[RMDB]
RNA sequence: GGGAACGACUCGAGUAGAGUCGAAAAGCAGCAUCAUUGAAGGUGAAAAUCCUGUAGAUGAUAUGGACUACCAGUGCAUUUGUGAUACGGUUUCUAAGAGUCGAGUUGUUUGGGAAUGCAGCUCAAAUUACACAGCUACUUUCGAGUAGCUGUGUAAAAAAGAAACAACAACAACAAC
Reactivity to 2A3 in 0.01 (KOAc 150mM, MgCl2 10mM, bicine 150mM(pH8.5), 24C), signal-to-noise 7, nucleotides 027 to 126: g040c030a000g020c020a010u000c000a010u010u050g050a060a010g010g010u030g030a040a010a020a060u090c000c000u000g030u040a010g010a010u010g000a020u010a080u120g050g040a030c020u090a110c030c040a060g040u030g070c070a100u050u130u140g120u070g050a070u080a230c100g050g000u030u030u020c040u050a140a100g050a060g160u130c050g010a000g010u020u010g040u030u100u110g170g040g000a040a020u050g010c010a010g000c000u010c020a020a020a030
Reactivity to DMS in 0.01 (KOAc 150mM, MgCl2 10mM, bicine 150mM(pH8.5), 24C), signal-to-noise 6, nucleotides 027 to 126: g010c060a130g010c110a040u000c020a020u000u010g020a170a040g020g000u000g000a070a070a180a120u010c000c010u020g010u040a250g000a020u010g000a030u010a120u010g000g020a070c060u000a170c070c020a070g030u010g000c060a070u020u010u000g020u010g000a110u030a090c200g010g000u000u000u010c030u000a070a110g020a120g020u000c040g000a130g030u000u000g010u000u000u010g010g010g010a090a050u020g010c060a040g000c020u000c040a020a080a080